[RMDB]
RNA sequence: GGGAACGACUCGAGUAGAGUCGAAAAGGGCGCACGAUGGGUGGCUCAAGCUGCUGACGCAGUUCCGCACCUACGGCAUCACCGCGACGCAGAAGCAAUGGCGUCGGCAGGCGUUCACGCACGGCACAGCCCGCGCGCUGGGCUUCCUGCUGGGCGCGCAACGUAGAUCGUUCGCGAUCUACGUUGCAAAAGAAACAACAACAACAAC
Reactivity to 2A3 in 0.01 (KOAc 150mM, MgCl2 10mM, bicine 150mM(pH8.5), 24C), signal-to-noise 1, nucleotides 027 to 156: g080g010g000c050g000c060a020c140g180a180u080g060g030g060u060g050g000c030u020c110a060a000g010c000u010g030c040u130g050a040c170g000c030a040g020u060u010c050c020g020c020a080c010c000u090a060c000g000g010c010a030u070c020a030c040c040g000c020g010a050c020g000c000a040g020a190a050g060c090a120a140u170g050g010c010g000u040c000g000g000c030a020g040g000c020g010u010u020c010a020c010g040c010a040c080g000g000c040a090c040a300g010c000c020c000g020c000g000c000g040c130u020g000g000g000c000u170u170c000c010u000g000c000u070g070g010g000c020g000c000